[RMDB]
RNA sequence: GGGAACGACUCGAGUAGAGUCGAAAACAGCGUCGAGCAUCCUCGCCGAGGUCCUUUCUGCUGCCUGUCCCGCCUCACCCCGCUCCAUCACACCAGCUGGCCCUCUUUGCUUCCUUUUCCCAGAAUCGACUCGAUGCCUGUUCGCAGGCAUCGAGUCAAAAGAAACAACAACAACAAC
Reactivity to 2A3 in 0.01 (KOAc 150mM, MgCl2 10mM, bicine 150mM(pH8.5), 24C), signal-to-noise 1, nucleotides 027 to 126: c010a020g000c010g050u050c020g040a010g010c060a140u160c030c030u060c000g050c040c070g000a070g100g010u070c060c000u010u130u060c010u000g020c000u020g010c020c000u040g070u070c000c000c010g010c000c000u020c010a060c020c000c020c000g060c000u000c040c010a050u030c010a020c020a020c000c010a020g020c040u010g010g050c000c000c010u000c000u000u050u050g020c000u050u010c020c010u000u060u010u050c000c000c000a040g060a010a060u110c020